[RMDB]
This 177-nucleotide RNA was probed chemically with DMS.
RNA sequence: GGGAACGACUCGAGUAGAGUCGAAAAGAUAUGGAGCAUGCCAUGUACUUGUGUAGACAUGUCCUAAGGGUCGGAAACGACCCGAAGGACAACAGCUACACAAGUACAUGGCCGCUGCUCCUAAGUCCGGUCUUUAUGAGUUCGCUCAUAAAGACCGAAAAGAAACAACAACAACAAC
Reactivity to DMS in 0.01 (KOAc 150mM, MgCl2 10mM, bicine 150mM(pH8.5), 24C), signal-to-noise 1, nucleotides 027 to 126: g010a130u000a300u000g010g020a000g020c000a020u000g070c030c000a010u000g020u000a010c030u020u030g040u010g010u010a000g020a050c040a270u000g000u000c000c000u020a050a300g000g110g020u000c000g010g010a070a090a220c020g000a030c000c010c000g000a070a040g000g010a010c000a070a010c290a150g000c020u000a010c000a000c000a000a050g010u000a020c000a020u010g000g000c000c020g000c000u000g000c000u040c000c000u010a020a050g000u000c050
The DMS profile rests on 716 reads.
Conditions: 150 mM KOAc, 10 mM MgCl2 and 150 mM bicine (pH 8.5), 24 C.
Reactivities are given for positions 27 through 126.